The record gives the reactivity of an RNA of 177 nucleotides to 2A3 and DMS. The reactions ran in a buffer of 150 mM KOAc, 10 mM MgCl2 and 150 mM bicine (pH 8.5), at 24 C. For 2A3, 6,573 sequencing reads were counted. For DMS the reverse transcriptase was MarathonRT.
RNA sequence: GGGAACGACUCGAGUAGAGUCGAAAAUAAAAAUGUAUGUAUGUGGUCCUACUGUAUAUAACUACAUUCAUAUUGGUAACGCAAGACCAGCAAUUAAUUAUGACGUAGUGAGACGUUACUUUGAAUACCUACAAAAUAACUUCGGUUAUUUUGUAGGAAAAGAAACAACAACAACAAC
Reactivity to 2A3 in 0.01 (KOAc 150mM, MgCl2 10mM, bicine 150mM(pH8.5), 24C), signal-to-noise 7, nucleotides 027 to 126: u200a010a060a030a000a000u170g030u030a010u020g020u000a030u020g020u010g010g000u040c090c060u090a130c080u140g170u140a080u020a010u050a220a030c010u010a000c010a010u000u070c020a000u050a010u040u100g040g000u020a020a020c030g000c050a070a040g030a160c030c030a020g010c050a020a090u110u110a100a090u170u220a200u170g060a050c080g020u080a080g080u090g140a050g020a020c010g010u020u010a020c000u050u050u140g040a050a030u050a140
Reactivity to DMS in 0.01 (KOAc 150mM, MgCl2 10mM, bicine 150mM(pH8.5), 24C), signal-to-noise 5, nucleotides 027 to 126: u050a010a060a050a060a060u030g000u000a010u000g020u000a020u020g000u000g000g000u000c090c130u000a060c140u010g010u020a140u040a080u030a100a030c020u010a000c010a030u010u010c010a010u010a040u000u010g000g020u020a010a040c070g000c080a060a080g000a100c090c060a040g000c100a050a060u020u030a040a100u020u030a070u020g020a080c160g000u010a050g020u020g000a160g000a050c050g000u010u000a020c050u010u040u010g010a060a090u020a070